RNA sequence: GGGAACGACUCGAGUAGAGUCGAAAAAUUCUGCCAUCCUUUAUCCUGUGGAUGGAAUUUGGUCAGAAAGAUUAGCUAGAACUUUAACUGUAGAAAUGGGAGGAAGUUCUUCUAUUAGUGACUAUAAGACUGGGUGAGUCUUCGGACUCACCCAGUCAAAAGAAACAACAACAACAAC
Reactivity to 2A3 in 0.01 (KOAc 150mM, MgCl2 10mM, bicine 150mM(pH8.5), 24C), signal-to-noise 2, nucleotides 027 to 126: a000u120u100c020u050g180c000c010a000u000c000c000u200u120u060a300u070c010c070u170g080u090g060g000a000u000g020g000a000a000u150u080u070g000g000u000c000a000g140a220a180a020g130a050u040u040a000g040c140u000a000g000a040a010c000u020u000u070a020a130c220u200g230u300a090g130a240a240a130u270g010g030g000a220g040g050a020a000g000u000u000c010u000u000c000u000a020u060u030a140g120u070g080a000c000u000a080u030a300a160